Source information: Chemical mapping of a 177-nucleotide RNA with DMS and 2A3. The RNA was probed in 150 mM KOAc, 10 mM MgCl2 and 150 mM bicine (pH 8.5) at 24 C. The DMS profile rests on 857 reads.
RNA sequence: GGGAACGACUCGAGUAGAGUCGAAAAGAUAUGGAUGCGUGAAUGUGCCAGACACGUUCGGAAACGAACGAAUGUCGGUAAUUCAUUACGCAUCCUAAGUCAAAAUCAGCAACUUCGGUUGCUGAAACCGUGAUGCAAGGUUCGCCUUGCAUCACGGAAAAGAAACAACAACAACAAC
Reactivity to DMS in 0.01 (KOAc 150mM, MgCl2 10mM, bicine 150mM(pH8.5), 24C), signal-to-noise 1, nucleotides 027 to 126: g000a070u000a300u000g000g000a000u000g000c010g050u000g000a010a000u020g020u000g000c050c040a180g010a020c000a100c000g000u000u000c000g020g000a070a070a300c000g030a020a020c020g000a130a130u000g010u020c000g040g020u000a020a140u010u020c000a110u030u020a030c000g000c000a000u000c000c000u010a010a100g000u000c100a150a060a110a250u050c000a000g010c010a000a020c000u010u010c180g050g010u000u000g000c000u010g000a020a090a140
Reactivity to 2A3 in 0.01 (KOAc 150mM, MgCl2 10mM, bicine 150mM(pH8.5), 24C), signal-to-noise 2, nucleotides 027 to 126: g000a000u080a000u110g030g000a010u000g000c000g000u140g300a040a040u140g020u110g150c130c080a000g030a000c000a000c020g030u000u020c010g030g000a060a070a050c000g010a000a000c020g070a220a280u120g000u000c010g000g010u040a040a080u130u060c010a000u050u070a020c020g000c000a000u000c000c000u010a000a020g010u000c020a000a010a030a250u010c000a000g010c000a000a020c030u080u160c300g190g020u020u000g010c030u000g000a010a030a010